[RMDB]
RNA sequence: GGGAACGACUCGAGUAGAGUCGAAAAUUGCUCCGCGUCUGAAAGAACUGAAACUGAUCGACUCCAUCAUCCCGGAACCACUGGGUGGUGCUCACCGUAACCCGGAAGCGAUGGCGGCAUCGUUGAAACAGCUAGUACUCUUCGGAGUACUAGCUGUAAAAGAAACAACAACAACAAC
Reactivity to DMS in 0.01 (KOAc 150mM, MgCl2 10mM, bicine 150mM(pH8.5), 24C), signal-to-noise 2, nucleotides 027 to 126: u020u000g020c060u000c010c000g000c130g000u000c040u010g020a120a060a100g010a090a050c100u000g030a080a080a100c080u010g000a120u010c050g010a070c010u000c010c030a050u010c060a120u000c040c010c020g020g000a110a100c150c160a070c060u010g010g020g030u000g020g010u000g000c070u000c010a050c060c050g030u010a110a100c060c040c010g010g000a210a050g000c050g020a110u000g010g000c200g030g030c030a010u010c030g000u000u000g010a110a150

This 177-nucleotide RNA was probed chemically with DMS. The data come from the RNA Mapping Database (RMDB), library OK2TST. Conditions: 150 mM KOAc, 10 mM MgCl2 and 150 mM bicine (pH 8.5), 24 C.